Source: RMDB library M2RFPK, as collected in RNAgym. An RNA of 207 nucleotides, treated with 2A3 and DMS and read out base by base. The DMS profile rests on 5,737 reads. For 2A3 the reverse transcriptase was SuperScript II with manganese. The reactions ran in a buffer of 150 mM KOAc, 10 mM MgCl2 and 150 mM bicine (pH 8.5), at 24 C. The 2A3 profile rests on 632 reads.

RNA sequence: GGGAACGACUCGAGUAGAGUCGAAAACGCACUCGCAGCUGAAUAACCUGCGCUGAGCCCUUCUCCCCCAGCUUGCCUGUGUCCUAGGGAAUUGGAAGGUCAUCCUUCACAGGAUCGUGUGGAAGUCAUUACUCGUGAGUGUUCGCACUCACGAGAACUAAAGGUAAUGCUUCGGCAUUACCUUUAGAAAAGAAACAACAACAACAAC
Reactivity to 2A3 in 0.01 (KOAc 150mM, MgCl2 10mM, bicine 150mM(pH8.5), 24C), signal-to-noise 1, nucleotides 027 to 156: c100g020c010a080c000u030c010g020c000a000g040c040u120g100a170a120u100a050a080c000c000u030g020c030g000c170u080g060a050g040c000c100c000u050u080c070u060c000c000c000c010c000a000g030c000u040u100g070c000c000u000g020u000g000u130c000c090u060a090g080g000g000a040a100u150u040g170g000a080a000g000g020u120c030a100u100c010c000u000u040c000a010c030a090g030g000a000u030c070g040u010g000u020g020g000a040a050g000u020c030a070u080u060a130c000u000c000g000u000g020a000g010u000g010u070u060c270g030c130a000c000u010c010a000c010g000a000g000a000a000
Reactivity to DMS in 0.01 (KOAc 150mM, MgCl2 10mM, bicine 150mM(pH8.5), 24C), signal-to-noise 2, nucleotides 027 to 156: c060g020c040a080c020u000c070g020c050a040g020c070u000g010a130a120u010a060a110c080c030u010g010c040g020c050u000g000a150g010c030c030c020u000u000c030u000c020c020c060c020c030a110g000c030u000u000g020c030c040u020g020u000g010u000c050c030u000a100g030g030g000a080a100u000u000g000g020a080a090g010g010u000c080a110u000c020c020u000u000c040a120c080a070g000g010a040u010c070g020u000g030u000g000g010a080a210g000u010c030a110u000u000a120c010u000c000g030u000g000a040g030u010g010u000u000c300g010c000a020c000u000c000a010c010g010a010g000a030a120